[RMDB]
RNA sequence: GGGAACGACUCGAGUAGAGUCGAAAAGAUAUGGACCAGCUUUUGACGCGGAUAUAUCGGAAACGAUAUAAUCGCGAUAAGCUGUGUCCUAAGUCAAAAGGUCACUGAGGUUCGCCUCAGUGACCAAGGAUACCAAUAGCUUCGGCUAUUGGUAUCCAAAAGAAACAACAACAACAAC
Reactivity to 2A3 in 0.01 (KOAc 150mM, MgCl2 10mM, bicine 150mM(pH8.5), 24C), signal-to-noise 1, nucleotides 027 to 126: g020a010u050a040u090g000g010a000c000c000a010g040c030u110u060u080u260g300a160c180g000c000g030g000a010u000a000u000a000u010c000g000g010a020a050a030c020g020a010u000a000u020a020a070u030c010g000c100g060a030u020a010a000g000c000u000g090u090g000u080c000c000u010a030a010g020u010c020a040a020a080a160g010g000u010c000a000c000u000g000a000g070g010u080u200c300g170c040c000u000c000a010g000u000g000a000c000c000a000a000
Reactivity to DMS in 0.01 (KOAc 150mM, MgCl2 10mM, bicine 150mM(pH8.5), 24C), signal-to-noise 2, nucleotides 027 to 126: g010a020u010a180u000g010g000a020c000c000a000g000c000u010u000u000u010g010a140c080g040c000g030g000a040u000a010u000a000u010c010g030g000a060a020a070c000g010a000u000a010u010a000a050u000c000g010c000g020a080u010a010a010g000c000u010g000u020g020u000c000c000u000a020a100g000u010c020a050a040a130a130g000g000u000c010a000c000u000g010a010g010g000u000u030c300g000c000c000u000c000a010g000u000g000a000c000c000a000a010